This 177-nucleotide RNA was probed chemically with DMS and 2A3. 2A3 adducts were read by reverse transcription with SuperScript II with manganese. In probing experiments dimethyl sulfate is read out at A N1 and C N3, which are open when not base-paired. For DMS, 8,344 sequencing reads were counted. Conditions: 150 mM KOAc, 10 mM MgCl2 and 150 mM bicine (pH 8.5), 24 C.

[RMDB]
RNA sequence: GGGAACGACUCGAGUAGAGUCGAAAAUCUUGGAUCGUAGAGAUAAUUGAUGCGUAAGUUGAAGGUCUGCCUAUGCCUUUUUUCUCUAACUCUUUAACUAAACUGGCUUCGGUAAAACGCGCUGUGGUCAAUUGGAUGUUUUCGAACAUCCAAUUGAAAAAGAAACAACAACAACAAC
Reactivity to DMS in 0.01 (KOAc 150mM, MgCl2 10mM, bicine 150mM(pH8.5), 24C), signal-to-noise 7, nucleotides 027 to 126: u000c030u000u000g000g020a060u000c100g010u000a050g000a070g000a060u000a040a070u000u000g000a100u000g020c030g020u000a030a070g010u000u000g010a130a110g020g010u000c060u000g010c040c020u000a050u010g010c020c010u000u000u000u000u000u000c020u000c020u000a060a090c120u010c040u000u000u000a050a100c130u000a040a070a100c090u010g010g010c020u000u000c050g000g010u000a040a030a070a090c100g020c300g010c040u000g010u000g010g000
Reactivity to 2A3 in 0.01 (KOAc 150mM, MgCl2 10mM, bicine 150mM(pH8.5), 24C), signal-to-noise 4, nucleotides 027 to 126: u020c020u030u060g040g010a000u040c050g030u080a020g020a000g010a070u040a080a080u120u080g050a060u090g020c020g010u020a050a050g020u040u060g120a150a040g100g110u020c020u020g030c000c000u040a040u060g010c000c000u030u070u000u000u050u030c040u020c020u020a080a120c020u050c030u080u160u050a080a090c080u110a150a050a080c020u020g050g000c000u070u110c050g000g040u050a050a040a020a020c010g000c000g000c050u040g040u050g080g040